Chemical mapping of a 177-nucleotide RNA with DMS and 2A3. Conditions: 150 mM KOAc, 10 mM MgCl2 and 150 mM bicine (pH 8.5), 24 C. For DMS the reverse transcriptase was MarathonRT. DMS (dimethyl sulfate) methylates the pairing face of unpaired adenines and cytosines.
RNA sequence: GGGAACGACUCGAGUAGAGUCGAAAAGAUAUGGAGUUGAACUACAGCCUCGAAGUUCAUCGAUCUCGGAAACGAGGGAGAAUUAGAGGCUGCAACUCCUAAGUCAAAAGCACGGUUCGCCGUGCAACUACGAGGUAUCGUUCGCGAUACCUCGUAGAAAAGAAACAACAACAACAAC
Reactivity to DMS in 0.01 (KOAc 150mM, MgCl2 10mM, bicine 150mM(pH8.5), 24C), signal-to-noise 1, nucleotides 027 to 126: g000a080u000a300u000g020g000a020g000u000u000g010a060a030c160u000a300c000a040g000c000c000u010c000g020a260a130g000u000u000c020a140u020c190g000a060u040c020u000c000g000g020a040a050a180c030g000a000g000g000g000a000g010a020a020u000u000a230g000a000g030g060c000u000g010c020a020a020c000u000c000c030u000a040a000g000u030c020a050a070a130a130g030c000a000c050g000g000u010u000c110g000c000c000g010u010g010c030a040a050
Reactivity to 2A3 in 0.01 (KOAc 150mM, MgCl2 10mM, bicine 150mM(pH8.5), 24C), signal-to-noise 1, nucleotides 027 to 126: g020a030u030a060u140g030g000a000g010u020u000g060a040a060c160u210a070c240a000g010c000c020u030c010g020a030a020g020u040u040c040a180u300c130g020a110u030c010u000c000g000g050a110a040a060c010g000a000g030g100g000a070g000a010a000u300u020a010g000a000g000g040c020u000g000c000a000a000c000u000c010c010u010a070a050g050u020c030a000a100a000a080g000c020a000c000g030g000u090u210c300g070c120c000g000u020g050c000a010a020